An RNA of 177 nucleotides, treated with DMS and 2A3 and read out base by base. For DMS, 3,994 sequencing reads were counted. High DMS reactivity at an A or C suggests that its Watson-Crick edge is free. The 2A3 profile rests on 2,859 reads. Source: RMDB library OK2TST, as collected in RNAgym. DMS adducts were read by reverse transcription with MarathonRT.
[RMDB]
RNA sequence: GGGAACGACUCGAGUAGAGUCGAAAACUCUUCGAUGGUGCCCAUGCCGUUGUGAAUUAACAGUAUUGGCGUAGUUACAGGCAGUGUGGACGCGAGGCUUUUGACGGCAUCGGAAACCUGCCAUGCAGGAUGCCCUAUGAUUCGUCAUAGGGCAUCCAAAAGAAACAACAACAACAAC
Reactivity to DMS in 0.01 (KOAc 150mM, MgCl2 10mM, bicine 150mM(pH8.5), 24C), signal-to-noise 4, nucleotides 027 to 126: c050u010c040u020u010c110g010a080u000g000g000u000g020c110c010c020a050u000g010c010c010g010u000u000g020u000g010a170a100u020u020a060a060c080a060g020u000a100u000u000g010g000c030g020u000a090g000u010u010a090c130a110g000g000c040a020g030u010g060u010g000g010a190c150g010c050g010a070g020g000c040u000u000u000u000g030a100c130g000g000c020a060u000c100g000g000a170a090a030c040c040u000g010c020c040a090u010g010c150a100
Reactivity to 2A3 in 0.01 (KOAc 150mM, MgCl2 10mM, bicine 150mM(pH8.5), 24C), signal-to-noise 3, nucleotides 027 to 126: c010u040c030u080u140c090g090a050u100g050g100u110g000c010c000c020a010u000g000c000c010g030u030u030g070u040g120a180a220u160u090a110a020c030a040g020u050a110u080u090g020g000c040g010u060a030g090u080u110a040c060a080g020g010c020a020g100u020g020u020g240g040a030c020g000c020g100a050g050g000c000u020u040u060u180g090a040c060g000g010c010a010u070c000g030g020a020a020a040c000c000u000g040c030c010a030u130g030c030a050